RNA sequence: GGGAACGACUCGAGUAGAGUCGAAAAACCCCAGAAACCAUUCCUUAUACCUUGAGUAUUGCUGAAUUCAGUUUAGCGUGCAUGCUCUUGGCUAUUCUCAUAGUGAUUGUCCAAUUUGGAGUUACUUAAAACACGACACCCUUCGGGGUGUCGUGAAGUUUUAACUACAGUUCGCUGUAGUUAAAACAAAAGAAACAACAACAACAAC
Reactivity to DMS in 0.01 (KOAc 150mM, MgCl2 10mM, bicine 150mM(pH8.5), 24C), signal-to-noise 1, nucleotides 027 to 156: a060c030c000c000c050a170g010a250a120a060c010c010a060u000u010c030c010u000u000a290u010a040c000c010u000u040g030a040g000u020a000u010u010g000c010u000g000a120a110u000u030c190a170g030u000u000u000a060g030c060g000u000g040c140a170u000g010c010u010c000u010u010g020g030c030u010a050u000u010c040u000c030a110u000a060g010u030g010a020u000u010g000u000c000c050a100a080u010u000u000g010g010a210g000u010u000a070c050u000u000a000a120a100a190c000a010c010g050a030c000a000c000c000c000u000u030c300g030g100g060g010u010g000u000c000g040u000g010a020a040
Reactivity to 2A3 in 0.01 (KOAc 150mM, MgCl2 10mM, bicine 150mM(pH8.5), 24C), signal-to-noise 2, nucleotides 027 to 156: a000c050c010c010c000a030g090a130a070a010c050c000a110u090u110c040c020u190u140a080u040a190c000c000u000u020g010a000g020u050a030u230u110g000c020u000g020a220a160u140u250c090a120g120u050u110u130a070g000c070g030u060g030c020a020u020g000c000u030c000u020u000g000g000c010u030a030u120u060c050u020c040a140u140a090g040u050g050a050u100u120g080u060c020c000a060a200u120u070u220g060g010a020g000u030u010a040c000u040u060a070a070a070a070c000a000c000g040a000c000a000c000c030c030u020u050c100g040g000g030g000u000g000u000c010g030u000g000a000a000